[RMDB]
RNA sequence: GGGAACGACUCGAGUAGAGUCGAAAAGAGAAUGUAGAAACUGCCAUGCGUGAAGCCUUCUACCACGGUUCUCAAGUUUUCCGCGCAUUGGAGCUUCAGUUGGAAAAAGUAUUUGCCCAGCUUGGGCGUUCAGUGUACUGUUCGCAGUACACUGAACAAAAGAAACAACAACAACAAC
Reactivity to 2A3 in 0.01 (KOAc 150mM, MgCl2 10mM, bicine 150mM(pH8.5), 24C), signal-to-noise 1, nucleotides 027 to 126: g110a000g000a060a120u170g010u080a040g040a090a100a000c070u110g110c040c010a000u030g050c020g000u030g030a030a010g020c000c000u020u000c010u050a050c000c120a070c060g050g020u130u060c050u040c030a050a000g030u070u000u080u020c040c000g010c000g010c000a020u000u120g070g000a030g000c020u090u100c080a080g070u010u060g060g070a060a030a010a000a030g060u110a210u180u140u110g030c000c000c010a000g110c140u070u070g070g030g000c000
Reactivity to DMS in 0.01 (KOAc 150mM, MgCl2 10mM, bicine 150mM(pH8.5), 24C), signal-to-noise 3, nucleotides 027 to 126: g010a120g000a130a060u010g010u010a040g000a040a060a090c090u000g010c020c030a040u000g000c020g010u000g000a080a060g000c090c110u000u000c040u000a040c050c300a080c150g010g000u010u000c010u000c060a060a120g010u010u000u000u000c030c020g010c060g000c040a050u000u010g020g000a070g000c030u000u010c050a040g020u000u000g020g010a040a070a050a070a150g010u010a110u010u000u000g000c220c000c000a090g000c150u000u000g010g010g020c020